Annotation
The data come from the RNA Mapping Database (RMDB), library OK2TST. This 177-nucleotide RNA was probed chemically with DMS and 2A3. For DMS the reverse transcriptase was MarathonRT. The reactions ran in a buffer of 150 mM KOAc, 10 mM MgCl2 and 150 mM bicine (pH 8.5), at 24 C.
RNA sequence: GGGAACGACUCGAGUAGAGUCGAAAAGAUGCAGGUGGUGAGCAAUCUCAAGUCGGUUAACCGGAGUGAGGUGACCACCACAUUGGUGCCCGCGCAGGAUGAGCGACUCCACCAGACGCUCGAUGUAGCCGAUAGUAGUGUUCGCACUACUAUCGGCAAAAGAAACAACAACAACAAC
Reactivity to DMS in 0.01 (KOAc 150mM, MgCl2 10mM, bicine 150mM(pH8.5), 24C), signal-to-noise 1, nucleotides 027 to 126: g000a100u000g020c070a070g030g030u010g000g020u000g000a080g020c140a170a010u000c000u010c000a030a000g140u000c020g010g000u000u000a110a080c050c000g020g000a050g000u010g000a020g010g020u000g010a110c000c020a010c020c000a060c020a010u000u000g000g010u000g010c000c000c000g000c120g030c090a010g000g000a100u010g000a080g020c010g000a040c080u010c070c180a050c180c050a100g000a100c060g020c010u010c060g000a030u010g000u000a160
Reactivity to 2A3 in 0.01 (KOAc 150mM, MgCl2 10mM, bicine 150mM(pH8.5), 24C), signal-to-noise 2, nucleotides 027 to 126: g100a000u170g030c050a010g130g000u000g030g000u030g040a090g080c030a060a070u020c010u010c010a010a060g120u020c010g040g000u210u280a250a270c000c010g060g000a070g020u020g000a020g020g000u030g020a040c000c010a000c000c000a000c010a010u010u050g070g060u030g000c000c000c000g000c020g040c070a020g010g180a130u100g030a080g030c030g050a040c020u070c030c030a110c020c010a020g020a020c010g000c040u000c020g020a070u130g080u140a090

For DMS, 1,190 sequencing reads were counted. For 2A3, 1,427 sequencing reads were counted.